[RMDB]
Chemical mapping of a 177-nucleotide RNA with 2A3 and DMS. The reactions ran in a buffer of 150 mM KOAc, 10 mM MgCl2 and 150 mM bicine (pH 8.5), at 24 C. It was measured as part of the RMDB library TTRINS. 2A3 adducts were read by reverse transcription with SuperScript II with manganese.
RNA sequence: GGGAACGACUCGAGUAGAGUCGAAAAGAUAUGGACGAGCUAAGGCCUUGGAUUUACAGGUACAGGACCGUGGUCGGAAACGACCAUUAGUACUGUACCUGUUGUCAGGCUAUGCUCGUCCUAAGUCGUCCUCUACUGUGUUCGCACAGUAGAGGACAAAAGAAACAACAACAACAAC
Reactivity to 2A3 in 0.01 (KOAc 150mM, MgCl2 10mM, bicine 150mM(pH8.5), 24C), signal-to-noise 1, nucleotides 027 to 126: g040a000u140a020u290g000g000a000c000g000a000g000c010u080a120a220g100g000c050c000u100u300g140g020a020u300u170u300a000c020a000g000g000u000a000c000a000g020g030a010c000c010g010u000g030g000u000c000g030g030a060a120a080c030g000a000c000c000a020u040u050a000g020u000a010c000u000g000u020a010c000c000u000g000u010u000g000u020c000a000g000g010c000u000a000u030g000c000u000c000g000u010c000c000u000a000a010g000u000c000
Reactivity to DMS in 0.01 (KOAc 150mM, MgCl2 10mM, bicine 150mM(pH8.5), 24C), signal-to-noise 1, nucleotides 027 to 126: g000a100u020a300u000g000g000a010c000g000a030g030c000u010a110a300g000g000c010c060u020u020g000g010a040u030u020u010a000c000a000g010g010u000a020c010a000g000g010a060c210c200g010u040g010g000u000c000g000g000a130a250a220c000g000a030c000c000a000u000u000a060g020u000a080c020u000g000u000a000c010c010u000g000u000u010g010u000c000a030g000g000c000u000a300u010g010c000u000c000g010u020c000c000u000a010a050g000u000c090
For DMS the reverse transcriptase was MarathonRT.